This 177-nucleotide RNA was probed chemically with 2A3 and DMS. The data come from the RNA Mapping Database (RMDB), library OK1LIB. Conditions: 150 mM KOAc, 10 mM MgCl2 and 150 mM bicine (pH 8.5), 24 C. Values cover nucleotides 27 to 126.
RNA sequence: GGGAACGACUCGAGUAGAGUCGAAAAGGGUGUCGAUCUGCUCCAAGACACCUAGAUCCAUGCUGUCGGGUUUUUACCUUAGGCUCUUUUGAGCGACAGCAUACGGAGCAGAUUUGGAUCUUAAGAAGGGUGUGUGGUAGUUCGCUACCACGUACCCAAAAGAAACAACAACAACAAC
Reactivity to 2A3 in 0.01 (KOAc 150mM, MgCl2 10mM, bicine 150mM(pH8.5), 24C), signal-to-noise 7, nucleotides 027 to 126: g020g000g000u010g000u010c000g010a030u000c000u000g000c000u000c000c010a100a000g010a010c010a000c000c000u000a030g020a030u050c060c010a020u030g000c000u000g000u010c010g000g050g000u060u060u030u150u230a070c010c000u060u150a150g040g020c000u000c000u010u240u100u270g010a000g000c010g000a000c000a000g000c000a000u000a010c030g000g000a000g000c000a000g000a000u020u010u020g010g000a010u010c010u030u060a130a100g090a150a100
Reactivity to DMS in 0.01 (KOAc 150mM, MgCl2 10mM, bicine 150mM(pH8.5), 24C), signal-to-noise 6, nucleotides 027 to 126: g000g000g020u010g000u000c000g000a010u000c010u000g000c000u000c000c000a080a060g000a020c010a000c010c000u000a030g000a100u040c040c040a110u020g010c000u000g010u000c020g010g000g010u010u030u030u030u050a040c000c010u000u040a120g020g010c000u000c000u000u020u010u040g010a010g020c000g010a010c000a000g000c000a050u020a030c090g000g000a000g000c010a010g000a020u010u000u000g000g000a170u000c010u010u010a120a100g020a140a140
For DMS the reverse transcriptase was MarathonRT.